Annotation:
The data come from the RNA Mapping Database (RMDB), library OK3TST. This 207-nucleotide RNA was probed chemically with DMS and 2A3. For DMS the reverse transcriptase was MarathonRT.

RNA sequence: GGGAACGACUCGAGUAGAGUCGAAAAUUCUACAUCGGCUUCCGAAACGAGCUGUUCAUCUCGGUCCACUACCCCGGCGGUUCGGUCAACGUCUACGUCCACGAACUCGGUCACGCAAUCGAUUACCAGUGGACCGGUGACGGGAAGCUGAUCAGCGGAAUCAAUGAUGAUUCGUCAUCAUUGAUUCAAAAGAAACAACAACAACAAC
Reactivity to DMS in 0.01 (KOAc 150mM, MgCl2 10mM, bicine 150mM(pH8.5), 24C), signal-to-noise 2, nucleotides 027 to 156: u000u010c010u010a080c060a080u000c010g030g070c000u000u000c020c010g020a090a120a170c080g010a100g000c020u000g020u000u010c040a080u000c020u000c010g040g050u000c010c040a040c020u000a140c070c020c010c080g010g020c080g030g010u000u000c060g000g000u010c030a060a110c040g010u000c070u030a090c090g020u000c020c030a060c020g000a040a090c090u010c020g000g010u010c060a110c050g020c130a090a100u000c070g010a160u000u010a070c060c020a140g000u000g020g000a050c010c020g030g030u000g030a020c030g020g000g000a060a070g000c000u000g000a030u000c030a100g020c120g000
Reactivity to 2A3 in 0.01 (KOAc 150mM, MgCl2 10mM, bicine 150mM(pH8.5), 24C), signal-to-noise 5, nucleotides 027 to 156: u040u020c010u050a090c020a040u010c020g020g000c000u020u000c020c020g100a130a120a100c080g020a110g080c090u090g110u150u060c050a100u030c080u070c090g010g030u040c040c010a050c050u080a070c010c030c020c000g050g000c060g040g000u020u030c010g000g040u060c060a050a020c020g050u030c060u140a070c080g010u000c060c010a060c060g020a030a020c040u020c080g040g040u060c060a060c140g070c070a070a110u110c050g090a080u090u140a060c030c030a020g000u000g000g000a000c000c000g010g000u020g010a010c010g010g000g000a000a000g000c010u010g000a000u010c020a020g150c030g120

2A3 adducts were read by reverse transcription with SuperScript II with manganese.
Values cover nucleotides 27 to 156.